[RMDB]
RNA sequence: GGGAACGACUCGAGUAGAGUCGAAAAUCAAAUAUAAAAGCUGAGAUGAGCUCAGCAAGGGUAUUUUUCGAGAGAUGAGCUCUCGUUCCCUAUCCGUUGCUCCGGAAACGGUAGCUUUUACAAAAAAGAAAUCAAUAGUAUUCGUACUAUUGAUUUCAAAAGAAACAACAACAACAAC
Reactivity to 2A3 in 0.01 (KOAc 150mM, MgCl2 10mM, bicine 150mM(pH8.5), 24C), signal-to-noise 3, nucleotides 027 to 126: u040c000a000a110a020u220a010u050a090a100a030a030g000c020u010g010a020g010a170u220g160a100g230c000u000c010a000g000c010a010a010g030g000g000u050a030u020u050u000u020u030c010g010a010g020a010g020a090u230g170a090g160c000u000c000u000c010g010u000u000c000c000c000u010a020u030c000c000g050u020u050g000c010u000c020c010g040g000a070a060a040c010g020g030u060a000g000c000u050u040u070u070a080c080a020a150a020a020a000a030
Reactivity to DMS in 0.01 (KOAc 150mM, MgCl2 10mM, bicine 150mM(pH8.5), 24C), signal-to-noise 4, nucleotides 027 to 126: u000c110a070a120a060u010a140u010a050a050a030a130g010c000u000g020a020g010a300u010g010a190g040c010u010c010a000g020c020a020a040g020g010g010u000a020u010u000u010u000u000c000g000a030g000a030g010a290u000g020a200g020c010u010c010u000c000g000u000u000c000c000c010u010a200u010c020c010g010u010u000g000c020u000c030c030g000g000a080a100a090c020g010g010u000a030g010c020u000u000u000u010a040c140a000a030a090a080a070a190